[RMDB]
RNA sequence: GGGAACGACUCGAGUAGAGUCGAAAAGGAACCACACGACAUAUUAAUAUUCACAGAAGCUCAAAUUCGUGGUGACUAGAUGGAGCGCCGUCGCAAGGAAAGCUAGCAGAUUCUGGAAGACAGUAGAGAACUCGUAUAGGUUCGCCUAUACGAGUUCAAAAGAAACAACAACAACAAC
Reactivity to 2A3 in 0.01 (KOAc 150mM, MgCl2 10mM, bicine 150mM(pH8.5), 24C), signal-to-noise 1, nucleotides 027 to 126: g050g010a040a040c020c010a030c030a000c040g060a020c060a020u100a030u150u060a090a060u070a110u130u150c050a060c030a130g090a250a040g050c020u010c120a040a080a110u160u040c050g120u050g080g000u050g000a140c020u030a010g030a170u160g100g010a130g060c030g000c040c030g070u130c030g000c010a000a050g000g020a090a000a000g130c080u100a000g030c040a000g020a200u200u040c030u010g020g000a030a030g060a030c040a010g130u170a050g060a030
Reactivity to DMS in 0.01 (KOAc 150mM, MgCl2 10mM, bicine 150mM(pH8.5), 24C), signal-to-noise 2, nucleotides 027 to 126: g000g040a100a140c030c010a060c090a050c070g000a040c130a040u000a090u000u000a110a090u010a130u000u010c070a060c060a100g000a040a050g010c060u000c090a020a110a100u000u000c050g000u000g010g020u000g010a150c020u010a070g000a130u010g000g030a070g000c040g010c050c020g000u010c030g040c070a060a070g000g000a110a070a070g010c030u000a080g020c030a060g010a090u000u000c050u010g000g000a090a040g000a150c100a060g030u000a050g030a300